[RMDB]
RNA sequence: GGGAACGACUCGAGUAGAGUCGAAAAUUAAAUAGCGUAAUCGACAUUGAGAAUGUACGCUAAGUGUGUGUUGUUUGGGCAACGUCCAAUUGAACACACACACAGUUGGACCUAAUGUCGAAAAAAACAUUAUUAGUAGGUUCGCCUACUAAUAAUGAAAAGAAACAACAACAACAAC
Reactivity to 2A3 in 0.01 (KOAc 150mM, MgCl2 10mM, bicine 150mM(pH8.5), 24C), signal-to-noise 9, nucleotides 027 to 126: u180u100a030a020a080u090a020g030c020g030u040a040a080u030c010g000a000c010a010u010u060g040a030g040a140a140u140g020u050a010c010g000c040u020a120a130g000u000g000u000g000u000g010u040u030g080u010u030u020g040g000g000c100a300a130c230g030u010c010c000a020a020u040u140g180a050a000c010a000c000a000c000a000c000a000c010a010g120u220u210g070g030a020c000c000u020a020a020u000g000u000c000g020a080a000a000a000a000a000a000
Reactivity to DMS in 0.01 (KOAc 150mM, MgCl2 10mM, bicine 150mM(pH8.5), 24C), signal-to-noise 9, nucleotides 027 to 126: u010u000a030a070a150u000a020g010c030g010u000a050a070u000c010g010a020c010a020u000u000g000a090g010a100a090u010g020u000a010c000g010c010u000a040a120g010u000g010u000g010u000g000u000u000g010u000u010u000g010g010g010c030a120a130c300g010u000c000c000a050a060u000u010g010a030a010c020a010c010a010c010a010c010a020c120a070g000u000u000g020g010a190c020c020u000a030a030u000g010u000c010g020a000a000a040a060a080a050a110